[RMDB]
RNA sequence: GGGAACGACUCGAGUAGAGUCGAAAAUGGGGAUAGGAUUUCGUGGAGGUCUACCAUGGAGGUUGCCCAGUGAAAUGAAGUAUUUCAGACAGGUCACUUCAUUGACGAAAGAUCCAAACAAAAAUAAACUUUAUGCGACGUUCGCGUCGCAUAAAGUAAAAGAAACAACAACAACAAC
Reactivity to 2A3 in 0.01 (KOAc 150mM, MgCl2 10mM, bicine 150mM(pH8.5), 24C), signal-to-noise 2, nucleotides 027 to 126: u110g020g020g000g030a010u050a120g100g050a000u010u090u000c040g000u030g010g010a080g030g060u050c050u030a100c060c000a000u020g080g000a030g010g050u140u140g020c030c010c010a020g080u030g060a000a000a030u010g000a030a010g120u230a110u000u040u090c040a010g070a150c000a080g040g080u080c010a000c040u030u000c030a000u000u040g010a020c050g150a040a000a100g010a000u000c000c000a100a050a110c100a030a060a010a030a000u250a050a070
Reactivity to DMS in 0.01 (KOAc 150mM, MgCl2 10mM, bicine 150mM(pH8.5), 24C), signal-to-noise 2, nucleotides 027 to 126: u000g000g000g000g030a120u010a070g000g000a100u000u000u050c050g120u020g030g030a160g010g000u020c070u000a100c000c010a220u000g000g000a060g020g010u010u000g000c000c000c050a150g050u000g020a080a010a000u000g010a000a010g020u000a080u000u040u020c070a040g020a130c140a140g000g000u000c290a000c030u020u010c020a000u010u000g000a160c050g000a010a000a120g000a000u010c010c020a090a100a000c150a060a070a020a040a130u010a050a060
The record gives the reactivity of an RNA of 177 nucleotides to 2A3 and DMS. For 2A3, 637 sequencing reads were counted.